[RMDB]
RNA sequence: GGGAACGACUCGAGUAGAGUCGAAAACGGCGCGGCGCGCGAAGCCGCGCUCGCGCGGCGGAUCGACGCGUUGCCGUGGGCGUCGAUCGAACGGGAUCUCGAGCGCGACGGCCAUGCGAUCGUGCAAUGCCGUAAUUAUAUUCGUAUAAUUACGGCAAAAAGAAACAACAACAACAAC
Reactivity to 2A3 in 0.01 (KOAc 150mM, MgCl2 10mM, bicine 150mM(pH8.5), 24C), signal-to-noise 3, nucleotides 027 to 126: c020g050g000c020g020c010g010g000c030g000c020g000c040g090a090a010g090c070c010g000c000g010c000u010c000g000c010g000c010g060g020c040g070g010a060u040c000g000a020c000g010c010g040u010u060g050c010c010g020u020g030g100g000c010g000u030c010g000a020u020c010g000a090a080c060g060g060g040a060u040c050u040c090g050a050g030c020g000c000g020a040c000g020g000c020c000a030u090g000c020g140a240u080c030g050u080g070c020a060a090
Reactivity to DMS in 0.01 (KOAc 150mM, MgCl2 10mM, bicine 150mM(pH8.5), 24C), signal-to-noise 7, nucleotides 027 to 126: c060g000g020c010g040c020g000g010c010g020c030g030c060g010a110a150g020c150c010g020c010g000c020u000c050g030c020g030c020g010g010c070g010g010a080u000c010g000a040c010g010c010g020u000u000g010c020c020g020u000g010g010g020c000g010u000c020g000a020u000c010g010a080a120c160g000g000g010a100u010c050u000c040g010a120g000c030g010c020g010a030c020g010g000c030c080a050u000g010c030g010a090u000c030g020u000g010c080a110a150
Record summary: This 177-nucleotide RNA was probed chemically with 2A3 and DMS. For DMS the reverse transcriptase was MarathonRT. The reactions ran in a buffer of 150 mM KOAc, 10 mM MgCl2 and 150 mM bicine (pH 8.5), at 24 C. The DMS profile rests on 16,149 reads. Source: RMDB library OK2TRN, as collected in RNAgym.